[RMDB]
This 177-nucleotide RNA was probed chemically with 2A3 and DMS.

RNA sequence: GGGAACGACUCGAGUAGAGUCGAAAAGAAGGCGUUCAAACCCGUUCAACCGCCCAUCCCAAUACUGUAGUACUUCGGUAUCGCAGCCCUCCGCCGCGCCCCGCCCGAACGCUGCGGUGGUCGCCCAAAUUUUAUAUGUAUUCGUACAUAUAAAAUUAAAAGAAACAACAACAACAAC
Reactivity to 2A3 in 0.01 (KOAc 150mM, MgCl2 10mM, bicine 150mM(pH8.5), 24C), signal-to-noise 9, nucleotides 027 to 126: g090a030a030g030g010c020g010u050u060c080a080a080a120c010c010c010g010u060u070c040a070a050c030c000g010c010c010c000a060u030c010c000c000a020a040u140a080c060u070g060u140a080g030u020a080c020u030u050c100g040g010u040a040u120c050g000c030a020g000c010c000c000u030c010c020g020c010c010g010c000g010c010c000c000c010g010c000c000c010g010a030a010c030g000c030u030g010c010g020g030u060g010g010u040c010g010c000c000c000a020
Reactivity to DMS in 0.01 (KOAc 150mM, MgCl2 10mM, bicine 150mM(pH8.5), 24C), signal-to-noise 9, nucleotides 027 to 126: g010a110a110g000g010c020g010u010u010c070a080a100a110c060c030c030g010u010u010c090a100a110c110c030g010c050c010c040a100u000c010c020c020a120a090u030a070c050u010g010u010a080g010u010a040c040u010u020c100g010g010u000a020u010c070g010c030a050g010c050c020c010u000c020c030g010c030c050g010c050g000c040c020c020c030g000c030c020c030g000a050a050c060g010c020u000g010c060g000g020u000g010g010u010c030g010c010c040c030a050
For DMS the reverse transcriptase was MarathonRT.